[RMDB]
RNA sequence: GGGAACGACUCGAGUAGAGUCGAAAAUAGUGUGGUCCAAAAGGAUGGUGUUGAAAACACUCCUCCUCACUAUUUUACUCUUGGAUGCAAAAUUUUAACGCUCACCCCACGCAACAAGUGGAGUGGCCAAUUACAACUCCUUCGGGAGUUGUAAUUGAAAAGAAACAACAACAACAAC
Reactivity to DMS in 0.01 (KOAc 150mM, MgCl2 10mM, bicine 150mM(pH8.5), 24C), signal-to-noise 3, nucleotides 027 to 126: u000a000g020u010g000u000g010g000u020c190c140a050a070a090a030g000g000a080u010g000g030u000g020u010u000g000a130a100a110a110c010a010c010u000c000c020u000c010c000u000c020a010c000u000a000u000u010u000u000a160c100u000c050u000u010g020g030a090u000g000c070a070a060a080a160u000u000u030u010a060a130c160g020c030u020c020a010c000c000c000c000a010c010g010c150a120a090c260a080a100g000u000g000g010a050g000u000g000g000c020
Reactivity to 2A3 in 0.01 (KOAc 150mM, MgCl2 10mM, bicine 150mM(pH8.5), 24C), signal-to-noise 3, nucleotides 027 to 126: u010a000g010u010g030u030g000g040u160c110c060a070a100a020a040g020g000a030u150g040g080u020g050u040u110g150a070a120a010a000c000a010c000u020c000c010u010c000c000u000c000a000c000u010a020u010u010u000u040a070c020u030c010u090u110g150g050a090u110g070c060a050a130a210a250u040u190u110u130a180a010c060g000c020u090c070a000c000c000c010c000a000c000g020c050a050a300c010a300a040g010u000g030g000a000g000u000g010g010c020